The data come from the RNA Mapping Database (RMDB), library TTRDEL. This 177-nucleotide RNA was probed chemically with DMS and 2A3. Values cover nucleotides 27 to 126. DMS adducts were read by reverse transcription with MarathonRT.
[RMDB]
RNA sequence: GGGAACGACUCGAGUAGAGUCGAAAAGAUAUGGAUGCUAAGAGCAACAGCAAAGGUCGGAAACGACUUUGACAUGCUCGAAGCAUCCUAAGUCAAAGGCCUGAUUUCCUUCGGGAAAUCAGGCCAACUCAUAAUCCAGGUUCGCCUGGAUUAUGAGAAAAGAAACAACAACAACAAC
Reactivity to DMS in 0.01 (KOAc 150mM, MgCl2 10mM, bicine 150mM(pH8.5), 24C), signal-to-noise 4, nucleotides 027 to 126: g000a030u000a300u010g000g000a000u000g020c000u010a030a300g010a010g010c000a050a110c200a150g000c040a060a000a020g000g010u000c000g030g000a120a090a180c000g000a020c000u000u000u000g010a090c130a180u010g010c000u010c000g000a300a030g000c000a010u010c000c000u000a010a080g000u000c040a060a140a110g010g010c000c000u000g000a010u000u000u000c000c000u010u010c220g020g000g010a010a000a000u010c000a000g010g020c000c000a000a010
Reactivity to 2A3 in 0.01 (KOAc 150mM, MgCl2 10mM, bicine 150mM(pH8.5), 24C), signal-to-noise 2, nucleotides 027 to 126: g000a020u080a000u160g000g000a000u010g010c000u030a050a020g000a000g000c030a020a210c100a180g070c030a060a020a000g270g180u090c010g000g000a010a050a060c000g000a000c090u000u000u000g050a040c020a090u160g000c000u000c000g020a010a010g000c000a000u000c000c000u000a000a010g010u000c030a040a150a100g000g000c000c010u010g000a010u000u000u030c020c010u040u140c300g040g000g000a000a010a000u000c000a010g010g000c000c000a010a000